[RMDB]
The record gives the reactivity of an RNA of 177 nucleotides to DMS and 2A3. For 2A3 the reverse transcriptase was SuperScript II with manganese. Reactivities are given for positions 27 through 126.

RNA sequence: GGGAACGACUCGAGUAGAGUCGAAAAUAGAUUCCCAGAGAGAAUCGAGAGAAAACUGGCUCUCCCUUAGCCAUCCGAGUAGGACGUCUGUCCUCCUACGGAUGCCCAGGUCGGACCGCGGGGAGGUGAUAAUAGCUGUCUUCGGACAGCUAUUAUCAAAAGAAACAACAACAACAAC
Reactivity to DMS in 0.01 (KOAc 150mM, MgCl2 10mM, bicine 150mM(pH8.5), 24C), signal-to-noise 1, nucleotides 027 to 126: u010a120g000a110u000u000c000c000c000a230g010a150g020a110g000a040a040u000c050g000a080g010a130g000a080a050a060a090c070u000g010g000c040u000c000u010c000c030c010u000u000a080g030c110c040a020u000c010c000g020a030g000u000a050g000g000a000c010g000u030c190u020g020u020c010c030u000c070c000u000a110c000g000g010a010u000g030c040c070c080a070g040g000u000c050g000g020a200c050c100g020c060g040g030g000g000a050g000g010u000
Reactivity to 2A3 in 0.01 (KOAc 150mM, MgCl2 10mM, bicine 150mM(pH8.5), 24C), signal-to-noise 1, nucleotides 027 to 126: u070a000g100a060u020u060c000c000c010a010g060a010g000a000g020a080a100u100c070g010a010g000a000g000a160a100a090a080c070u030g090g000c000u010c000u020c030c000c000u060u060a010g000c020c010a000u020c000c000g000a010g000u000a000g010g000a010c000g140u030c200u220g030u030c000c000u020c000c010u100a110c000g000g000a000u000g000c000c000c000a040g010g050u010c020g000g100a040c040c000g040c020g000g000g010g000a030g050g000u000